An RNA of 207 nucleotides, treated with 2A3 and DMS and read out base by base. For 2A3 the reverse transcriptase was SuperScript II with manganese. The RNA was probed in 150 mM KOAc, 10 mM MgCl2 and 150 mM bicine (pH 8.5) at 24 C. The DMS profile rests on 3,356 reads.
[RMDB]
RNA sequence: GGGAACGACUCGAGUAGAGUCGAAAAGGUUUCGACGACGGUCGUAGGUUCAGGAGAAGCGGGUCGAGGAUGCGCAGUCAUCUCGUCAACGCUCUGCGCGAACCAAUAGGUGCCGAUAACACUCGCACCGACUUCGCCCUCGCCGCCUGAGCGAGCCGCAACGAAUAUAGUUCGCUAUAUUCGUUGCAAAAGAAACAACAACAACAAC
Reactivity to 2A3 in 0.01 (KOAc 150mM, MgCl2 10mM, bicine 150mM(pH8.5), 24C), signal-to-noise 4, nucleotides 027 to 156: g110g010u040u090u100c040g010a050c020g000a020c060g020g030u070c050g020u090a110g070g000u010u040c040a020g010g080a060g050a140a020g020c010g000g040g030u060c010g000a030g160g030a080u080g010c160g010c060a030g050u170c020a050u010c020u020c030g080u020c040a180a160c060g000c030u030c010u070g050c040g030c060g000a020a040c010c000a050a050u100a060g000g000u010g050c130c040g040a030u100a160a130c150a030c110u000c030g000c000a000c000c000g010a010c010u050u000c010g030c050c010c000u010c020g010c020c000g070c040c050u090g010a040g000c030g010a020g040c040c060
Reactivity to DMS in 0.01 (KOAc 150mM, MgCl2 10mM, bicine 150mM(pH8.5), 24C), signal-to-noise 2, nucleotides 027 to 156: g010g000u000u000u020c000g030a060c050g000a080c010g010g000u040c030g030u020a110g020g050u000u000c040a130g010g020a100g000a040a050g030c050g030g000g010u000c000g000a090g030g000a030u000g040c050g090c240a150g000u000c020a030u000c040u000c040g030u000c010a050a050c050g010c040u000c020u000g000c020g020c050g020a050a060c030c040a100a080u000a010g010g040u000g010c010c020g000a220u000a060a100c090a090c040u000c060g000c010a120c300c010g000a020c030u000u000c020g000c000c000c010u000c000g010c020c000g010c040c040u060g020a130g010c000g000a040g060c210c100